This 177-nucleotide RNA was probed chemically with DMS and 2A3. The data come from the RNA Mapping Database (RMDB), library M2PK50. The 2A3 profile rests on 8,625 reads. The DMS profile rests on 4,680 reads.
RNA sequence: GGGAACGACUCGAGUAGAGUCGAAAAUAGCUGACGUUCGCGUCAGCUAAAAGCACCAAAACCUCCUGGCGGUGCGGCGCCGCCCCCGCCGGGAAGGCCGCCAACUCGAUGGGUUCGCCCAUCGAAACGUAAAGGCUUAUUUCGAUAAGCCUUUACGAAAAGAAACAACAACAACAAC
Reactivity to DMS in 0.01 (KOAc 150mM, MgCl2 10mM, bicine 150mM(pH8.5), 24C), signal-to-noise 5, nucleotides 027 to 126: u010a010g010c010u000g000a000c000g020u000u010c220g020c000g010u000c000a010g010c000u000a000a000a070a140g010c160a180c010c020a090a060a120a190c030c010u010c010c010u000g000g010c010g010g020u010g010c160g020g000c010g020c290c220g000c010c000c010c020c010g000c020c010g010g010g000a010a010g000g010c080c080g010c060c090a070a070c180u000c000g010a000u000g000g000g000u000u010c170g010c000c000c000a010u000c000g000a010a030a110
Reactivity to 2A3 in 0.01 (KOAc 150mM, MgCl2 10mM, bicine 150mM(pH8.5), 24C), signal-to-noise 3, nucleotides 027 to 126: u030a000g010c000u000g000a020c010g020u010u030c280g030c010g090u010c010a000g010c000u000a000a000a000a010g020c020a070c060c020a000a050a060a110c000c000u010c000c000u000g000g000c000g020g020u080g040c160g030g010c270g180c140c150g020c010c000c000c000c000g000c000c000g000g000g010a000a010g010g000c030c010g080c030c000a050a080c060u010c010g000a000u000g010g010g040u020u040c210g070c030c000c000a000u000c000g000a010a020a010